Description:
Chemical mapping of a 177-nucleotide RNA with 2A3 and DMS. For DMS the reverse transcriptase was MarathonRT. Values are in units of 0.01, from 0 to 300, in steps of 10. For DMS, 994 sequencing reads were counted.

RNA sequence: GGGAACGACUCGAGUAGAGUCGAAAACAAACUCUAAUACUGAUCCGUGGAUUAGAGAGACACUAAAAUUACACGAUCGACAAAUCUACGAAGACAUCUGGGGUAAAACCCGUCGUCCAGAAGGAACAACUGUGAAAAGGUUCGCCUUUUCACAGUUAAAAGAAACAACAACAACAAC
Reactivity to 2A3 in 0.01 (KOAc 150mM, MgCl2 10mM, bicine 150mM(pH8.5), 24C), signal-to-noise 2, nucleotides 027 to 126: c010a000a050a010c000u000c000u010a010a000u050a110c020u040g010a030u000c150c030g010u030g000g000a000u000u000a010g020a000g030a010g090a010c020a020c210u260a140a070a090a100u150u130a010c000a000c000g020a030u000c010g020a030c080a070a180a030u030c040u060a060c040g050a090a000g000a000c000a000u070c170u300g020g000g000g000u020a030a010a050a090c000c010c010g000u020c050g020u000c000c010a060g040a120a050g110g000a030a000c020
Reactivity to DMS in 0.01 (KOAc 150mM, MgCl2 10mM, bicine 150mM(pH8.5), 24C), signal-to-noise 2, nucleotides 027 to 126: c050a110a150a130c010u000c000u000a010a020u000a050c070u010g010a010u000c060c070g050u000g000g000a010u000u010a020g010a040g010a170g020a210c170a070c210u010a010a080a100a050u000u000a070c020a010c030g040a020u000c010g030a190c220a030a030a070u000c050u050a100c030g000a150a160g000a010c010a050u000c130u000g020g020g000g000u000a050a060a100a190c010c000c030g000u010c060g040u000c000c030a240g020a080a120g000g000a190a080c160